[RMDB]
RNA sequence: GGGAACGACUCGAGUAGAGUCGAAAACACUGAGUGACACACAGAGAGAGACUGACUGACACUCACUCUGUCACACUGAGUCAGAGAGUCUGUGACACUGUGUCAGACAGACAGAGACACAGUGACAGGAGGGCGUAGUAUUCGUACUACGCCCUCCAAAAGAAACAACAACAACAAC
Reactivity to 2A3 in 0.01 (KOAc 150mM, MgCl2 10mM, bicine 150mM(pH8.5), 24C), signal-to-noise 2, nucleotides 027 to 126: c040a020c060u040g040a010g070u050g150a060c000a000c000a000c020a090g000a010g010a010g020a010g010a070c030u070g030a040c070u080g050a050c040a010c060u030c010a030c010u040c000u000g010u020c030a000c010a050c110u050g030a010g000u050c060a010g050a000g020a010g150u000c020u060g070u100g010a020c030a020c020u040g020u010g010u100c000a020g060a090c010a060g100a040c050a010g110a010g000a040c020a000c000a000g000u010g000a010c030a040
Reactivity to DMS in 0.01 (KOAc 150mM, MgCl2 10mM, bicine 150mM(pH8.5), 24C), signal-to-noise 2, nucleotides 027 to 126: c100a110c170u010g020a080g000u020g010a110c190a060c160a130c050a000g010a010g000a220g000a060g000a140c040u010g010a130c100u020g000a070c100a210c010u000c020a040c070u000c010u000g010u000c070a090c110a170c030u000g000a040g040u000c040a030g010a190g010a030g010u000c070u000g000u010g010a160c010a060c120u000g000u000g010u000c020a180g000a130c130a120g020a050c120a070g000a110g000a020c010a000c010a030g000u000g010a090c070a100
Source: RMDB library OK2TRN, as collected in RNAgym. The record gives the reactivity of an RNA of 177 nucleotides to 2A3 and DMS. Reactivities are given for positions 27 through 126. Conditions: 150 mM KOAc, 10 mM MgCl2 and 150 mM bicine (pH 8.5), 24 C. Reactivities are rounded to 0.1 and cut off at 0 and 3.